This 207-nucleotide RNA was probed chemically with DMS and 2A3. Conditions: 150 mM KOAc, 10 mM MgCl2 and 150 mM bicine (pH 8.5), 24 C. DMS adducts were read by reverse transcription with MarathonRT. The DMS profile rests on 1,979 reads. Values cover nucleotides 27 to 156.
[RMDB]
RNA sequence: GGGAACGACUCGAGUAGAGUCGAAAAACUAAGAAAGGUGUUCAUGUAGCUAUAAGUACAGGAAGAAUAUUUCCUUCAGCAAAUUACUAUGCUGAAUUGAUAGGAGUGAAAUCACCAGUUAUAGCUUCAAAUGGAGCAUAUAUUAAAAACAGCAGUACUAAUAAAUCGGUUUCGACCGAUUUAUUAGAAAAGAAACAACAACAACAAC
Reactivity to DMS in 0.01 (KOAc 150mM, MgCl2 10mM, bicine 150mM(pH8.5), 24C), signal-to-noise 1, nucleotides 027 to 156: a160c080u020a100a110g040a130a060a110g040g070u000g050u000u000c050a090u000g000u010a040g010c030u000a040u000a030a070g010u000a090c040a100g010g010a090a040g010a070a100u010a070u000u000u000c060c020u010u000c010a000g040c000a000a020a150u010u010a190c160u000a120u010g010c000u030g000a030a040u000u010g010a070u010a080g010g010a060g030u000g000a050a070a030u000c040a080c020c020a130g000u000u000a020u010a090g000c040u000u000c020a020a060a110u010g000g000a040g000c040a040u000a060u000a030u010u010a000a100a040a090a030c040a030g000c060a020g000u000a160
Reactivity to 2A3 in 0.01 (KOAc 150mM, MgCl2 10mM, bicine 150mM(pH8.5), 24C), signal-to-noise 2, nucleotides 027 to 156: a010c020u090a080a010g040a090a040a020g130g010u010g010u100u060c010a010u090g020u060a010g010c000u000a000u020a100a010g130u060a050c100a080g000g050a060a040g030a140a070u050a040u080u050u010c010c000u000u010c010a000g000c010a000a040a110u160u070a110c110u150a080u110g000c020u020g030a040a020u090u070g070a100u040a060g000g090a020g070u020g110a080a060a020u050c030a030c070c000a000g010u020u000a020u020a010g000c000u040u000c060a110a160a140u140g050g010a010g040c030a000u040a030u030a030u060u120a100a110a050a010a020c010a010g080c010a010g000u030a060